Conditions: 150 mM KOAc, 10 mM MgCl2 and 150 mM bicine (pH 8.5), 24 C.
Chemical mapping of a 177-nucleotide RNA with DMS and 2A3.
DMS adducts were read by reverse transcription with MarathonRT.
It was measured as part of the RMDB library TTRDEL.
High 2A3 reactivity points to a flexible backbone, as in loops and unpaired stretches.
The 2A3 profile rests on 13,060 reads.
RNA sequence: GGGAACGACUCGAGUAGAGUCGAAAAGAUAUGGAAACAGAGGACCCACACGCAGAUAUCGGAAACGAUGUAGUGUGCGGUCUACCCACCUGUUUCCUAAGUCAAAACGUCCGCUUCGGCGGACGAACUCUUAAUCGUAGUUCGCUACGAUUAAGAGAAAAGAAACAACAACAACAAC
Reactivity to DMS in 0.01 (KOAc 150mM, MgCl2 10mM, bicine 150mM(pH8.5), 24C), signal-to-noise 5, nucleotides 027 to 126: g000a060u010a300u010g000g000a010a010a010c000a010g010a180g000g000a010c020c000c000a020c010a000c000g010c180a150g010a080u010a020u000c010g020g000a120a080a170c020g010a020u000g010u000a090g020u000g030u000g000c190g020g000u000c010u000a010c040c020c110a300c080c010u000g000u000u000u000c000c000u000a030a090g010u010c050a030a070a080a210c020g020u000c000c000g030c000u000u020c210g040g010c010g010g000a000c000g000a020a080
Reactivity to 2A3 in 0.01 (KOAc 150mM, MgCl2 10mM, bicine 150mM(pH8.5), 24C), signal-to-noise 5, nucleotides 027 to 126: g040a020u160a050u270g000g000a000a000a000c000a000g010a020g000g010a000c000c030c000a000c000a010c000g060c130a050g090a300u130a030u140c010g040g050a090a060a060c010g000a010u020g000u080a140g010u000g000u000g040c150g000g000u000c010u010a020c000c010c010a050c010c000u000g000u000u000u000c000c000u020a150a030g080u060c030a020a010a110a190c020g000u000c010c000g000c030u060u070c300g160g000c000g000g000a000c000g000a010a010